This 170-nucleotide RNA was probed chemically with DMS and 2A3. Conditions: 150 mM KOAc, 10 mM MgCl2 and 150 mM bicine (pH 8.5), 24 C. For 2A3 the reverse transcriptase was SuperScript II with manganese. The DMS profile rests on 31,977 reads.
[RMDB]
RNA sequence: GGGAACGACUCGAGUAGAGUCGAAAAAACCUCUGGCGUGUUGCAAAGCGGUUUGGUGAAAAUGUCACAUCCCAGUGGAGAUGUUGAGGCUUGUAUGGUUCAGGUUACCUGCGGUAGCAUGACUCUUAGGGUCUAGAGUUCGCUCUAGACAAAAGAAACAACAACAACAAC
Reactivity to DMS in 0.01 (KOAc 150mM, MgCl2 10mM, bicine 150mM(pH8.5), 24C), signal-to-noise 4, nucleotides 027 to 129: a060a030c060c020u040c080u020g020g050c080g050u050g000u060u030g020c090a080a100a060g050c050g000g030u000u000u000g000g000u010g000a080a050a070a070u050g000u000c050a070c080a100u020c040c010c020a000g000u000g020g020a150g000a040u070g000u000u000g060a040g010g060c080u020u010g040u000a080u000g080g000u000u000c120a090g000g020u030u040a020c100c000u060g000c220g000g000u060a120g030c050a000u080g030a130c200u000c070u030u040a020g020g020
Reactivity to 2A3 in 0.01 (KOAc 150mM, MgCl2 10mM, bicine 150mM(pH8.5), 24C), signal-to-noise 7, nucleotides 027 to 129: a000a000c000c010u000c000u010g020g010c040g010u080g010u040u040g010c050a060a070a040g020c030g010g070u080u080u110g080g000u100g060a080a050a020a070u200g060u090c010a000c000a030u040c010c000c000a000g060u080g070g040a150g000a030u080g050u100u100g040a010g010g000c010u070u070g040u070a100u110g050g040u080u120c050a010g010g020u040u050a040c020c020u060g020c030g070g020u000a010g010c040a040u060g040a070c000u010c000u070u070a060g130g040
Record summary: 2A3 is a SHAPE reagent: it acylates the 2'-hydroxyl of flexible nucleotides of all four kinds. It was measured as part of the RMDB library 15KLIB.